[RMDB]
RNA sequence: GGGAACGACUCGAGUAGAGUCGAAAAGAUAUGGAGAAUGGCUGCUUUUGACGCGUUGAGUAUCGGAAACGAUAUCCAACGCGAUAAGCAGCAUUCUCCUAAGUCAAAACGGCAGUUCGCUGCCGAACAUAACAAACCCGUUCGCGGGUUUGUUAUGAAAAGAAACAACAACAACAAC
Reactivity to 2A3 in 0.01 (KOAc 150mM, MgCl2 10mM, bicine 150mM(pH8.5), 24C), signal-to-noise 3, nucleotides 027 to 126: g000a010u070a050u160g010g000a020g020a030a030u110g300g100c010u010g010c010u110u140u110u250g250a130c100g000c010g000u000u010g010a020g040u000a000u010c000g030g000a060a060a020c000g000a000u000a010u010c020c000a010a000c000g010c000g000a000u010a000a000g010c000a000g020c010a000u000u010c000u010c000c000u000a000a000g000u020c020a000a000a090a120c010g000g000c000a010g000u080u150c230g100c160u000g000c020c010g010a030a010
Reactivity to DMS in 0.01 (KOAc 150mM, MgCl2 10mM, bicine 150mM(pH8.5), 24C), signal-to-noise 4, nucleotides 027 to 126: g000a030u000a300u010g000g000a010g000a010a000u000g020g050c000u000g010c000u010u000u010u010g020a190c110g020c000g010u000u000g000a040g010u000a000u000c000g010g000a140a080a230c000g000a010u000a000u000c030c000a010a010c000g010c000g030a020u000a020a010g000c000a000g000c000a000u000u000c000u000c000c020u000a000a050g000u000c040a060a080a140a190c030g010g000c000a010g000u000u010c300g030c000u000g000c000c010g010a070a140
Annotation: An RNA of 177 nucleotides, treated with 2A3 and DMS and read out base by base. The data come from the RNA Mapping Database (RMDB), library TTRDES. 2A3 adducts were read by reverse transcription with SuperScript II with manganese.